[RMDB]
RNA sequence: GGGAACGACUCGAGUAGAGUCGAAAAGAUCGCGCGUGAUCUGGUACCGUGCGCCGGCCGUGCGAGUACACGGCCGGAUCCGACUCGGCGCGAUCGGCGCCACUGAGAGUGAUCAUCGCGUACGUGGCCGCAAGCAGUGAUUCGUCACUGCUUGCGGAAAAGAAACAACAACAACAAC
Reactivity to 2A3 in 0.01 (KOAc 150mM, MgCl2 10mM, bicine 150mM(pH8.5), 24C), signal-to-noise 2, nucleotides 027 to 126: g020a040u050c000g010c020g000c020g000u040g010a120u040c040u060g030g050u110a140c060c050g080u070g050c110g030c030c030g000g050c000c050g020u080g050c130g080a060g050u140a050c000a010c000g000g090c020c010g020g000a000u040c010c060g020a030c000u020c030g060g090c000g020c020g050a100u040c020g080g000c000g030c000c040a050c080u130g030a040g000a060g210u140g070a080u020c070a030u140c050g000c000g040u090a050c070g030u100g050g000
Reactivity to DMS in 0.01 (KOAc 150mM, MgCl2 10mM, bicine 150mM(pH8.5), 24C), signal-to-noise 1, nucleotides 027 to 126: g010a060u010c020g020c020g010c040g000u000g000a110u000c010u000g020g000u010a060c130c030g010u000g000c040g000c020c030g000g010c010c000g040u010g010c030g000a140g020u050a140c010a080c010g010g000c000c010g030g000a010u000c030c060g010a110c040u020c000g020g010c010g020c010g000a060u010c060g000g000c030g020c010c000a120c170u030g000a130g010a080g000u010g000a110u000c040a110u000c070g000c030g010u000a100c110g000u000g000g000